[RMDB]
RNA sequence: GGGAACGACUCGAGUAGAGUCGAAAAGAGGACCCGUGCACGAUCGCGGUGACCUCGUGGUUCUGCAGGUUCCACGCGUUGACGAUCUCCGCCAACCGGGUGUGGUCGGUGGCGGGGAAGAAGUAUGGACAUGAGAGCGUUUCGACGCUCUCAUGUCAAAAGAAACAACAACAACAAC
Reactivity to 2A3 in 0.01 (KOAc 150mM, MgCl2 10mM, bicine 150mM(pH8.5), 24C), signal-to-noise 1, nucleotides 027 to 126: g140a070g060g020a050c000c000c000g050u060g030c090a090c300g080a270u150c000g000c060g080g060u160g000a150c000c000u040c000g000u050g010g000u050u000c020u080g160c100a040g030g000u090u000c010c010a060c050g000c010g070u040u170g050a050c050g020a120u000c000u000c000c010g000c000c010a100a240c040c010g020g030g130u160g050u110g120g060u070c000g000g050u000g000g010c020g000g030g020g000a010a020g090a010a000g020u120a040u140g040
Reactivity to DMS in 0.01 (KOAc 150mM, MgCl2 10mM, bicine 150mM(pH8.5), 24C), signal-to-noise 2, nucleotides 027 to 126: g000a070g010g010a280c090c000c060g040u000g000c100a110c200g010a030u010c040g010c010g030g000u030g030a100c060c020u010c000g060u000g010g050u000u000c090u000g000c090a120g000g000u000u000c010c020a050c080g000c160g000u000u000g000a080c140g010a180u000c000u000c000c000g030c000c000a040a110c000c000g010g000g030u000g010u000g000g010u030c010g010g000u000g000g000c010g010g020g000g010a010a020g000a080a150g000u000a070u000g000
Conditions: 150 mM KOAc, 10 mM MgCl2 and 150 mM bicine (pH 8.5), 24 C. This 177-nucleotide RNA was probed chemically with 2A3 and DMS.